An RNA of 207 nucleotides, treated with 2A3 and DMS and read out base by base.
Source: RMDB library RNAMAK, as collected in RNAgym.
DMS adducts were read by reverse transcription with MarathonRT.
The reactions ran in a buffer of 150 mM KOAc, 10 mM MgCl2 and 150 mM bicine (pH 8.5), at 24 C.
The DMS profile rests on 3,367 reads.
Reactivities are given for positions 27 through 156.
[RMDB]
RNA sequence: GGGAACGACUCGAGUAGAGUCGAAAACUGAGCUUCGGCUCAGCAAAUUCCGUAGGUACGAAUGAGCUUGGAUUUAUGCACAAAUGUGUUCGAAAGAGCGAAUGUGCAUUGUCAGCUCAUUACGUACCUAAACGGUGUAGAUACCCUUCGGGGUAAAGCCACUUGGAUAUUUCGAUAUCCAAGUGGCAAAAGAAACAACAACAACAAC
Reactivity to 2A3 in 0.01 (KOAc 150mM, MgCl2 10mM, bicine 150mM(pH8.5), 24C), signal-to-noise 3, nucleotides 027 to 156: c010u000g000a000g000c000u030u180c300g100g000c000u000c010a000g000c020a010a180a050u170u040c010c010g000u010a040g020g000u000a000c000g030a010a000u000g000a000g010c050u170u200g110g030a030u260u300u090a010u050g020c020a000c010a030a160a100u200g150u030g000u090u010c020g070a170a020a090g030a010g000c010g000a110a040u030g020u000g000c000a010u000u000g010u000c000a000g000c000u020c000a000u000u010a000c000g000u010a000c000c000u000a000a000a000c000g000g030u060g020u030a090g060a160u080a070c030c000c000u020u030c270g020g000g000g040u020a010a060a000
Reactivity to DMS in 0.01 (KOAc 150mM, MgCl2 10mM, bicine 150mM(pH8.5), 24C), signal-to-noise 2, nucleotides 027 to 156: c000u000g010a030g020c010u000u000c300g060g030c010u000c000a000g010c000a050a070a150u000u000c000c000g000u000a030g040g050u000a020c000g000a070a010u010g000a030g020c020u010u000g020g010a020u000u010u000a000u000g010c000a020c000a000a110a070u000g040u010g010u010u000c040g000a230a170a290g010a000g010c000g000a280a300u000g020u000g000c000a010u000u000g010u000c010a110g020c000u000c000a000u010u000a020c020g060u040a020c010c010u000a000a000a060c050g020g030u000g020u000a070g010a300u000a060c000c000c000u000u010c300g000g030g010g040u010a010a030a150